[RMDB]
RNA sequence: GGGAACGACUCGAGUAGAGUCGAAAAUCCUCCUCGGUAAUGGCGAAUGGGACCCCAGAUUUCCUUCCUAUUGAGAAGGAAAUAACUGGCACUCCCUUAGCCAUCCGAGUGGACGUUGUCCUCCUUCAAAAGUCAGACUUCGGUCUGACUAAAAGAAACAACAACAACAAC
Reactivity to DMS in 0.01 (KOAc 150mM, MgCl2 10mM, bicine 150mM(pH8.5), 24C), signal-to-noise 2, nucleotides 027 to 129: u030c030c010u010c180c000u020c020g070g000u050a120a040u030g030g020c010g010a270a140u020g000g000g000a150c200c300c020c040a020g000a060u000u000u000c000c040u030u000c040c000u070a140u100u090g030a150g020a040a030g070g020a040a020a000u010a000a000c020u010g000g040c180a190c300u010c000c070c010u000u000a130g030c040c000a000u020c000c000g010a060g010u040g010g000a090c100g040u000u000g000u020c030c010u040c040c020u080u010c140a070a070a080
Reactivity to 2A3 in 0.01 (KOAc 150mM, MgCl2 10mM, bicine 150mM(pH8.5), 24C), signal-to-noise 3, nucleotides 027 to 129: u000c000c000u030c020c000u010c000g010g000u050a170a000u000g000g000c020g040a050a040u070g000g010g000a000c070c090c000c000a000g000a000u020u000u000c000c060u000u000c010c020u260a300u200u300g070a300g000a090a020g000g020a000a000a000u010a030a040c000u000g000g010c030a030c000u030c030c000c000u000u010a010g030c000c000a000u000c000c000g000a000g000u020g020g000a010c030g000u010u010g060u030c000c020u040c000c030u120u170c050a030a020a060